[RMDB]
RNA sequence: GGGAACGACUCGAGUAGAGUCGAAAAUCCUAAGUCUUAGCUCGUGUUGACCACGUGCGAUUGUCAGGAUAAUCGGAAACGAUUAUCCUUGGAUUUAUCGCAUAUCAAACACGUGCUAAGAUAUGGAAAAACUCUAAAGUUCUUCGGAACUUUAGAGGGCAAAGAUCUUCUUCGGAAGAUCUUUGCCAAAAGAAACAACAACAACAAC
Reactivity to 2A3 in 0.01 (KOAc 150mM, MgCl2 10mM, bicine 150mM(pH8.5), 24C), signal-to-noise 1, nucleotides 027 to 156: u070c030c000u040a100a040g020u000c010u000u010a010g000c020u010c020g010u000g030u010u010g060a080c100c100a090c300g050u010g000c010g010a010u000u030g020u040c010a000g000g000a000u000a000a000u000c000g040g000a100a080a040c000g000a000u030u010a020u010c010c030u000u040g050g000a020u250u250u120a010u000c010g010c010a010u060a030u200c040a000a060a010c000a000c000g000u010g000c000u000a000a000g000a000u030a030u010g000g020a040a000a080a090a070c000u000c000u000a020a000a010g010u000u000c010u060u110c240g130g000a000a000c000u000u000u000a020g000a020g000